An RNA of 177 nucleotides, treated with 2A3 and DMS and read out base by base. Source: RMDB library OK1LIB, as collected in RNAgym. For 2A3, 531 sequencing reads were counted.
[RMDB]
RNA sequence: GGGAACGACUCGAGUAGAGUCGAAAAGUUGAGCCGAAUCCUAGGGCUCUUUCUAGGGAUUUUUGUGUCCGAUGCGACACGUAUGCAUCGUCUGAUCGUUAAACCUAAGAUCUGGGUAUUAAGAAAAGGGUAAAGAUUUCUUCGGAAAUCUUUACCCAAAAGAAACAACAACAACAAC
Reactivity to 2A3 in 0.01 (KOAc 150mM, MgCl2 10mM, bicine 150mM(pH8.5), 24C), signal-to-noise 2, nucleotides 027 to 126: g080u130u130g000a000g030c020c020g040a040a130u060c100c000u010a010g000g010g010c000u050c020u000u210u000c000u000a040g020g060g000a020u000u000u050u090u300g020u040g000u070c000c020g000a000u020g050c060g090a040c060a040c120g080u040a050u120g000c040a020u010c000g200u070c050u000g020a020u060c000g050u010u070a030a070a060c000c000u020a180a090g020a050u000c020u050g000g000g000u030a110u220u050a160a120g000a130a210a000a010
Reactivity to DMS in 0.01 (KOAc 150mM, MgCl2 10mM, bicine 150mM(pH8.5), 24C), signal-to-noise 1, nucleotides 027 to 126: g030u000u010g030a040g030c000c000g050a040a300u010c060c030u000a040g020g000g040c040u010c000u010u010u000c010u000a040g000g000g010a130u010u000u000u030u020g010u020g000u000c060c020g000a070u020g010c000g040a060c110a100c260g020u020a000u010g000c000a020u000c020g010u020c100u000g000a020u020c110g000u010u010a010a100a030c030c010u010a020a160g000a040u000c080u000g000g020g010u050a060u010u000a030a100g000a020a020a090a160
For DMS the reverse transcriptase was MarathonRT.